The record gives the reactivity of an RNA of 207 nucleotides to 2A3. For 2A3, 458 sequencing reads were counted. It was measured as part of the RMDB library M2RFPK. As a SHAPE reagent, 2A3 marks flexible, mostly unpaired nucleotides at the ribose 2'-OH.
RNA sequence: GGGAACGACUCGAGUAGAGUCGAAAAAUUGAGGGAUAAUACAGGCUCUCCCAUCCAAUUCCUAUUCCAACACGUCCUCGUCGUACAGAGUGGUAACAUGUGUCACCACAUAUCCAAGCUUGGGUACAAAAGCCAACUACGUUCGCGUAGUUGGCAACCUACCAUGGUGCUUCGGCACCAUGGUAGGAAAAGAAACAACAACAACAAC
Reactivity to 2A3 in 0.01 (KOAc 150mM, MgCl2 10mM, bicine 150mM(pH8.5), 24C), signal-to-noise 1, nucleotides 027 to 156: a000u080u090g010a060g030g040g010a000u050a170a060u120a170c060a130g130g040c010u000c000u010c010c010c010a050u100c120c000a030a060u020u060c000c000u050a070u070u000c070c000a030a030c020a050c160g100u060c010c010u120c080g060u010c000g000u030a070c020a070g150a050g090u010g000g000u120a020a080c110a140u100g000u010g050u110c060a050c060c050a090c040a050u060a050u000c000c000a000a090g020c180u160u160g020g000g020u090a080c080a070a070a030a000g000c020c000a000a000c000u000a000c000g070u050u000c060g000c000g180u000a000g000u000u000g000g000c000a000a000